Description: The data come from the RNA Mapping Database (RMDB), library OK2TST. Chemical mapping of a 177-nucleotide RNA with 2A3 and DMS. For DMS the reverse transcriptase was MarathonRT. 2A3 is a SHAPE reagent: it acylates the 2'-hydroxyl of flexible nucleotides of all four kinds.

RNA sequence: GGGAACGACUCGAGUAGAGUCGAAAAUCUGUCCUCAUAUCUUCUCGACGACCAUCAAGGCAUUGCAUCACGAAUGUUUGGAGCAAGCUACGGGCUUCAAGCUGGCGACAGUGCUGAGGAUGCAGUCGACAGGUCUAAUCUUCGGAUUAGACCUGUCAAAAGAAACAACAACAACAAC
Reactivity to 2A3 in 0.01 (KOAc 150mM, MgCl2 10mM, bicine 150mM(pH8.5), 24C), signal-to-noise 2, nucleotides 027 to 126: u060c030u070g090u070c000c010u110c030a060u080a100u120c070u120u030c030u030c020g050a020c020g040a020c000c010a020u020c010a020a020g020g010c010a000u000u040g020c030a070u050c040a030c120g100a220a050u180g020u010u010u000g020g000a020g010c010a000a020g020c040u140a100c120g100g060g000c000u010u010c000a000a000g000c000u040g020g000c020g020a020c000a010g020u010g000c020u010g000a040g300g000a000u000g020c020a030g020u020c010
Reactivity to DMS in 0.01 (KOAc 150mM, MgCl2 10mM, bicine 150mM(pH8.5), 24C), signal-to-noise 3, nucleotides 027 to 126: u020c120u000g010u000c020c020u000c070a050u010a020u000c040u000u000c020u000c010g040a050c030g020a180c300c010a000u000c030a030a300g000g020c000a010u000u000g010c090a170u000c030a070c110g010a250a050u000g020u000u010u020g000g000a010g020c000a060a110g010c150u000a020c090g000g010g000c000u000u000c000a000a030g030c000u000g000g020c030g010a020c020a010g030u000g000c020u000g000a270g000g000a040u000g000c070a270g020u000c050